Conditions: 150 mM KOAc, 10 mM MgCl2 and 150 mM bicine (pH 8.5), 24 C. The record gives the reactivity of an RNA of 177 nucleotides to DMS and 2A3. For 2A3 the reverse transcriptase was SuperScript II with manganese. It was measured as part of the RMDB library TTRDEL.
RNA sequence: GGGAACGACUCGAGUAGAGUCGAAAAGAUAUGGAUGGAGCGCGAUAAGCUAAGAUCGGAAACGAUCUGUAGCUUUUGACGCGUGAGGUCCUAAGUCAAAAUCUUUUUAGGUUCGCCUAAAAAGAAACCGUAUCUAAAGGUUCGCCUUUAGAUACGGAAAAGAAACAACAACAACAAC
Reactivity to DMS in 0.01 (KOAc 150mM, MgCl2 10mM, bicine 150mM(pH8.5), 24C), signal-to-noise 4, nucleotides 027 to 126: g000a050u000a230u000g020g000a000u010g020g020a300g000c010g020c010g030a130u010a020a010g000c000u000a050a010g000a000u010c010g010g000a060a050a100c020g010a000u000c000u000g000u010a020g010c000u000u000u000u000g000a210c080g000c000g020u000g010a300g000g000u000c000c000u000a050a110g000u000c010a080a070a180a120u000c000u000u000u000u000u000a010g000g020u000u020c300g020c000c000u000a010a010a000a010a010g000a030a070a090
Reactivity to 2A3 in 0.01 (KOAc 150mM, MgCl2 10mM, bicine 150mM(pH8.5), 24C), signal-to-noise 2, nucleotides 027 to 126: g010a020u070a000u100g000g000a000u060g030g090a060g020c020g000c010g070a100u080a290a020g000c000u010a010a000g010a000u000c000g010g000a040a030a030c010g000a000u000c010u020g100u030a000g000c000u040u030u060u160g120a050c010g000c000g000u030g020a030g020g030u000c010c000u010a070a000g020u000c020a030a030a160a300u040c000u000u020u010u020u030a010g030g000u040u050c260g080c060c010u030a010a000a000a000a000g000a080a040a030
For 2A3, 6,676 sequencing reads were counted.